[RMDB]
RNA sequence: GGGAACGACUCGAGUAGAGUCGAAAAAACAAACUACCAUCUACAUCAUUCCUGUGGUUUAUCUCAAAACCUAUUUGGCAAUUCUGAAAGUGAUGUCAUGUUGCAAUGAGCAGUAAGGAAGAGAACUUCAGUCAUUCCAGAAAUGACUUGACCGUGAGCAUGAGGUAUAGUUCGCUAUACCUCAUGCAAAAGAAACAACAACAACAAC
Reactivity to DMS in 0.01 (KOAc 150mM, MgCl2 10mM, bicine 150mM(pH8.5), 24C), signal-to-noise 2, nucleotides 027 to 156: a110a050c060a050a040a040c010u000a050c020c020a060u000c010u000a100c040a070u010c030a080u000u000c030c000u000g020u000g010g010u000u000u000a060u010c070u000c050a080a070a070a060c070c020u000a160u000u000u000g030g010c090a070a120u000u000c090u000g010a090a040a090g020u000g000a050u000g010u010c160a140u000g020u020u000g000c030a040a120u010g000a130g030c050a100g000u000a040a130g000g000a050a030g020a190g010a060a030c000u000u020c030a030g000u000c010a020u000u000c020c150a160g010a080a060a050u030g010a040c010u010u000g010a050c000c030g000u000g000a280
Reactivity to 2A3 in 0.01 (KOAc 150mM, MgCl2 10mM, bicine 150mM(pH8.5), 24C), signal-to-noise 4, nucleotides 027 to 156: a000a000c130a060a050a020c080u130a070c030c020a040u040c040u120a070c020a080u080c030a050u100u080c030c020u040g020u080g060g070u060u020u090a130u080c110u030c090a050a090a060a070c030c010u080a100u080u080u040g000g000c010a040a090u170u030c040u090g080a170a080a040g070u070g050a050u030g040u050c030a050u100g050u070u020g000c040a090a130u080g000a070g010c020a010g030u130a090a010g030g020a050a020g030a010g000a100a030c010u060u040c050a010g010u010c000a010u010u030c040c020a010g070a090a050a010u030g000a020c000u020u050g050a050c040c050g120u130g050a010
Structure probing data (DMS and 2A3) for a 207-nucleotide construct. Reactivities are given for positions 27 through 156. For DMS, 4,730 sequencing reads were counted. DMS adducts were read by reverse transcription with MarathonRT. It was measured as part of the RMDB library OK3TST. For 2A3, 2,257 sequencing reads were counted. The reactions ran in a buffer of 150 mM KOAc, 10 mM MgCl2 and 150 mM bicine (pH 8.5), at 24 C. 2A3 adducts were read by reverse transcription with SuperScript II with manganese.